[RMDB]
RNA sequence: GGGAACGACUCGAGUAGAGUCGAAAAGUCAGAUGGAAAACCAGGGUACCCAGGAAAACCAGGUCUCGAUGGUCCUAAGGGUAACCCAGGGUUACCAGGUCCAAAAGGUGAUCCUGGAGUUGGAGGACCUCCUGGUCUCCCAGGCCCUGUGGGCCCAGGAGCAUAAAUUAUUCGUAAUUUAUGCUCCAAAAGAAACAACAACAACAAC
Reactivity to DMS in 0.01 (KOAc 150mM, MgCl2 10mM, bicine 150mM(pH8.5), 24C), signal-to-noise 2, nucleotides 027 to 156: g000u000c070a060g010a230u000g000g000a120a040a130a070c050c010a050g010g000g000u000a110c010c010c010a110g020g000a060a050a050a050c000c000a040g000g010u010c120u000c140g020a120u010g030g010u000c000c010u010a120a130g010g020g020u000a030a030c010c010c030a030g010g040g010u000u000a020c010c010a110g030g020u000c140c210a080a120a190a210g020g050u010g000a050u000c000c000u010g000g010a080g010u000u000g020g020a120g010g010a020c010c000u010c050c050u000g020g010u010c020u010c020c000c010a090g020g000c030c020c010u000g000u000g000g000g020c020c010c030a230
Reactivity to 2A3 in 0.01 (KOAc 150mM, MgCl2 10mM, bicine 150mM(pH8.5), 24C), signal-to-noise 5, nucleotides 027 to 156: g100u100c030a040g080a260u200g050g030a080a110a040a030c030c010a020g000g010g020u150a140c030c040c060a060g020g000a020a040a000a020c010c000a020g020g050u080c110u110c250g140a120u240g010g010u030c020c010u070a090a150g180g040g050u070a030a010c000c000c000a000g010g000g000u000u010a020c000c000a010g010g150u130c080c040a040a090a010a100g000g000u000g000a000u000c000c000u010g020g030a170g040u040u050g100g060a040g000g000a000c000c000u010c000c000u000g010g000u010c010u000c000c010c000a000g020g000c010c000c010u040g010u070g000g020g000c020c000c010a030